[RMDB]
RNA sequence: GGGAACGACUCGAGUAGAGUCGAAAAGAAGGUGCAGAACGUGUUCGUCACGACGACCGAGCACGGCAAGGUGAACGUCGUCGUGUCGCAGACGGGCCAUACCGAGACGAUGAAGAACGGCGACCGAUACGCGCAGCAGUUUCGACUGCUGCGCGUAAAAAGAAACAACAACAACAAC
Reactivity to DMS in 0.01 (KOAc 150mM, MgCl2 10mM, bicine 150mM(pH8.5), 24C), signal-to-noise 2, nucleotides 027 to 126: g000a140a060g000g020u000g020c100a130g020a130a070c020g010u010g010u000u000c020g020u010c010a020c030g000a060c000g010a010c030c070g000a210g030c020a010c000g010g010c210a110a160g000g010u000g000a050a250c270g020u000c000g020u000c010g020u000g000u000c010g020c170a050g000a050c020g000g020g000c000c040a200u000a110c060c020g000a040g000a100c010g010a110u000g000a100a080g000a100a140c100g000g000c040g040a030c070c020g020a150
Reactivity to 2A3 in 0.01 (KOAc 150mM, MgCl2 10mM, bicine 150mM(pH8.5), 24C), signal-to-noise 1, nucleotides 027 to 126: g080a050a070g050g010u030g080c050a030g010a140a010c000g030u060g120u100u030c020g040u030c020a000c020g110a000c030g010a000c090c040g040a090g010c010a020c040g150g090c230a100a010g180g000u030g050a090a000c050g000u000c010g050u010c030g000u010g000u020c010g000c080a000g040a060c020g010g010g000c030c040a060u110a040c000c040g030a000g030a010c060g000a020u130g110a040a050g040a030a010c000g010g050c020g010a010c030c020g000a040